[RMDB]
RNA sequence: GGGAACGACUCGAGUAGAGUCGAAAAGAGUGGUUUGUUUCUGAGUUUGUGGGGCAGGCAACACCAAGCGAGGAACAAGUGCCCCCAUGAAGUCUACAGGUGUCCUUGAUGGGGUGGGUGCAAGGACUGGGUGGAUAGCAGGGGCUGCCUAAUUUAAUGACGUAAUGAGUUUCGACUCAUUACGUCAAAAAGAAACAACAACAACAAC
Reactivity to 2A3 in 0.01 (KOAc 150mM, MgCl2 10mM, bicine 150mM(pH8.5), 24C), signal-to-noise 1, nucleotides 027 to 156: g130a000g100u110g010g010u020u030u090g010u000u010u000c010u080g040a070g100u070u110u050g060u130g000g040g000g040c030a020g060g000c030a080a000c040a040c030c000a000a000g170c010g090a060g060g010a110a060c030a110a000g080u010g060c020c000c000c020c000a050u070g090a030a030g060u030c020u010a010c010a090g130g000u030g030u030c000c010u050u030g020a080u100g070g000g000g040u200g030g030g000u050g000c010a010a000g010g070a110c060u030g000g070g000u030g000g000a060u060a070g110c040a030g010g000g010g000c010u010g010c000c010u070a030a060u230u110u100a170a080